[RMDB]
RNA sequence: GGGAACGACUCGAGUAGAGUCGAAAACGCGGUGAACUUAACCGCCGUGGCGGCCACGUUUGGGUGGGCCUCGAACAGCUGGGCAAGGUCUGCGCCCGGGGGCUCGGGUGAGCGGCGAGUCUUCAGCCAUCGGAGUCGAGUUCGCUCGACUCCGAUGAAAAGAAACAACAACAACAAC
Reactivity to DMS in 0.01 (KOAc 150mM, MgCl2 10mM, bicine 150mM(pH8.5), 24C), signal-to-noise 1, nucleotides 027 to 126: c090g000c070g020g000u000g010a170a090c220u000u040a120a100c080c000g000c000c040g020u000g000g070c040g000g000c060c000a000c120g000u070u050u010g000g000g030u000g000g000g000c000c000u010c110g010a080a070c220a160g010c000u060g000g020g020c040a240a100g010g000u050c000u000g000c040g000c000c000c010g030g040g000g020g060c010u000c000g000g000g000u000g000a100g050c170g010g020c060g000a160g000u010c010u000u020c080a100g080c070
Reactivity to 2A3 in 0.01 (KOAc 150mM, MgCl2 10mM, bicine 150mM(pH8.5), 24C), signal-to-noise 2, nucleotides 027 to 126: c060g000c000g010g000u060g060a140a080c100u110u050a200a020c020c000g000c000c030g000u010g040g000c010g100g030c000c050a050c040g060u100u240u140g070g030g000u050g010g050g030c010c000u000c040g000a020a040c010a070g030c040u020g030g000g000c030a060a030g060g000u020c000u090g010c010g020c000c000c030g050g020g000g020g020c030u090c040g010g000g030u090g030a050g010c030g000g000c000g000a000g020u040c050u120u070c040a010g010c000

This 177-nucleotide RNA was probed chemically with DMS and 2A3. Reactivities are given for positions 27 through 126. DMS (dimethyl sulfate) methylates the pairing face of unpaired adenines and cytosines. It was measured as part of the RMDB library OK1LIB. The reactions ran in a buffer of 150 mM KOAc, 10 mM MgCl2 and 150 mM bicine (pH 8.5), at 24 C. For 2A3, 1,237 sequencing reads were counted.